[RMDB]
RNA sequence: GGGAACGACUCGAGUAGAGUCGAAAAAAUCCUUCUGAUCUCGGAAUAAUUUGGAUUUAGUCUGAGCUGCUGCCGCAUAACUGGGAUUACUCAGCAAUUCCUGGAUCAAAGGCGUCAGUUCUGUCGCAUUAAUGCCAGGAUUCGUCCUGGCAUUAAUAAAAGAAACAACAACAACAAC
Reactivity to DMS in 0.01 (KOAc 150mM, MgCl2 10mM, bicine 150mM(pH8.5), 24C), signal-to-noise 5, nucleotides 027 to 126: a070a040u000c010c000u000u020c080u000g010a040u000c020u000c300g000g000a040a040u010a090a110u030u020u020g000g010a070u010u010u020a060g020u010c010u000g000a040g030c130u000g020c100u010g020c060c050g040c070a090u030a070a080c090u010g010g010g000a100u020u000a090c120u050c050a050g000c100a080a040u000u010c010c000u000g010g000a000u010c100a050a120a090g010g000c040g000u000c020a060g010u010u000c030u000g000u020c040g020c110
Reactivity to 2A3 in 0.01 (KOAc 150mM, MgCl2 10mM, bicine 150mM(pH8.5), 24C), signal-to-noise 5, nucleotides 027 to 126: a000a010u070c040c000u070u040c070u070g060a070u000c060u040c040g010g050a070a030u140a090a070u120u130u180g040g010a040u040u010u140a070g080u030c020u060g010a000g000c030u050g010c050u100g040c040c020g070c100a140u130a300a100c060u080g000g000g000a010u040u060a080c020u050c080a020g020c060a040a020u010u010c020c000u020g010g000a020u060c030a040a030a040g030g000c000g020u040c020a060g020u060u020c040u050g100u100c050g030c080